[RMDB]
This 177-nucleotide RNA was probed chemically with 2A3.
The 2A3 profile rests on 513 reads.
The RNA was probed in 150 mM KOAc, 10 mM MgCl2 and 150 mM bicine (pH 8.5) at 24 C.
RNA sequence: GGGAACGACUCGAGUAGAGUCGAAAAAUAAACCUGCUCAAGUACAAAAAUCAGUACCAACUGUACCUGUUGCACAUAACUACAAUAAAUCAGUUGCUAACAGAGGAAACUUAUAUGCUUAUGGAAAGUUCUGUUCCUGGUUCGCCAGGAACAGAACAAAAGAAACAACAACAACAAC
Reactivity to 2A3 in 0.01 (KOAc 150mM, MgCl2 10mM, bicine 150mM(pH8.5), 24C), signal-to-noise 1, nucleotides 027 to 126: a000u130a000a060a020c030c000u000g000c000u080c000a130a110g000u120a180c100a100a230a100a000a080u100c000a000g080u080a140c000c010a020a140c000u000g000u120a050c000c000u000g020u000u030g000c100a000c000a110u080a300a020c250u190a070c100a100a160u220a090a070a060u090c030a090g050u070u010g100c030u020a030a000c050a040g020a000g110g000a160a000a000c010u130u000a000u000a000u300g090c000u200u060a020u100g010g010a000a080a000